The data come from the RNA Mapping Database (RMDB), library M2RFPK. The record gives the reactivity of an RNA of 207 nucleotides to 2A3 and DMS.
[RMDB]
RNA sequence: GGGAACGACUCGAGUAGAGUCGAAAAGAAUCACCGUACCUAUUUAGGUUUACGCUCCAAGAUCGGUGGAUAGCAGCCCUAUCAAUAUCUAGGAGAACUGUGCUAUGUUUAGAAGAUUAGGUAGUCGAUUACACAGCCAUGUUCGCAUGGCUGUGAAGUAAGGAACGUGAUUCGUCACGUUCCUUACAAAAGAAACAACAACAACAAC
Reactivity to 2A3 in 0.01 (KOAc 150mM, MgCl2 10mM, bicine 150mM(pH8.5), 24C), signal-to-noise 4, nucleotides 027 to 156: g050a030a070u100c050a010c000c020g010u010a000c010c000u080a080u240u300u230a040g020g040u040u080u050a030c030g020c010u010c000c000a030a000g010a040u050c020g060g060u030g000g060a060u060a050g100c090a010g010c010c000c040u040a050u090c060a070a090u020a030u140c020u010a030g010g010a020g010a050a020c070u060g050u060g050c020u100a040u100g020u060u110u060a100g000a180a040g000a060u120u110a070g090g000u040a080g060u030c050g010a030u080u120a020c010a000c000a000g010c000c000a000u000g030u050u010c140g040c060a000u000g000g000c000u000g010u000g000a000a000
Reactivity to DMS in 0.01 (KOAc 150mM, MgCl2 10mM, bicine 150mM(pH8.5), 24C), signal-to-noise 2, nucleotides 027 to 156: g000a110a080u000c010a210c020c040g020u010a080c010c000u000a210u000u000u010a050g040g020u000u000u000a050c050g060c000u000c020c010a110a060g020a030u000c060g010g060u000g030g000a070u000a070g020c080a240g000c130c070c030u000a170u000c040a110a110u000a040u000c070u000a040g000g010a050g010a040a060c040u020g030u010g030c040u000a070u000g000u010u020u000a090g030a130a210g010a070u000u000a040g000g030u000a050g000u000c020g010a190u000u000a300c010a010c000a000g030c000c000a010u000g050u000u000c300g010c050a030u010g010g000c000u010g020u010g020a000a070
The RNA was probed in 150 mM KOAc, 10 mM MgCl2 and 150 mM bicine (pH 8.5) at 24 C.
2A3 adducts were read by reverse transcription with SuperScript II with manganese.